[RMDB]
This 207-nucleotide RNA was probed chemically with DMS and 2A3. The reactions ran in a buffer of 150 mM KOAc, 10 mM MgCl2 and 150 mM bicine (pH 8.5), at 24 C.
RNA sequence: GGGAACGACUCGAGUAGAGUCGAAAACAAUCACCUUGGACCCGAUGAGAAUACGCAGCUGGUGGCCUUCCAGGUUGGACGAGGCGUUAAAAAGAGCCAGGCUUCGUUCGCGUACAGCGGGCUCUAUUUCGCUGUGCAGAAUGGUGAACCGUACUGGUCAGAAUAGAAUUUUCGAAUUCUAUUCUGAAAAAGAAACAACAACAACAAC
Reactivity to DMS in 0.01 (KOAc 150mM, MgCl2 10mM, bicine 150mM(pH8.5), 24C), signal-to-noise 4, nucleotides 027 to 156: c030a110a130u000c020a050c010c010u000u000g030g000a140c000c010c030g020a120u010g010a130g020a120a100u000a060c040g010c040a090g030c050u000g030g030u000g000g000c020c020u000u000c020c030a100g020g020u010u010g020g010a070c060g020a070g010g040c020g010u010u010a030a050a060a110a120g010a100g000c010c010a090g020g000c030u020u000c030g010u000u000c030g030c070g030u000a060c030a040g020c020g020g000g030c190u000c110u010a100u000u000u000c030g020c010u000g020u000g030c010a150g010a040a050u010g010g030u000g000a030a090c020c020g020u000a110c060u000g000g020
Reactivity to 2A3 in 0.01 (KOAc 150mM, MgCl2 10mM, bicine 150mM(pH8.5), 24C), signal-to-noise 4, nucleotides 027 to 156: c030a020a080u080c010a010c040c000u050u100g090g020a060c000c010c020g070a110u120g030a010g060a100a060u100a090c060g010c030a040g020c060u040g020g000u040g050g030c010c010u030u010c020c010a060g100g050u110u080g060g040a020c030g020a010g010g020c030g030u080u080a090a120a050a030a010g090a020g030c020c010a060g040g040c000u040u030c020g010u030u030c020g000c030g050u020a020c000a010g010c010g020g020g000c030u020c010u070a070u030u090u080c010g010c000u010g000u010g010c020a010g040a080a030u100g040g010u060g080a020a010c020c010g020u090a090c060u060g010g030
Source: RMDB library OK3TST, as collected in RNAgym.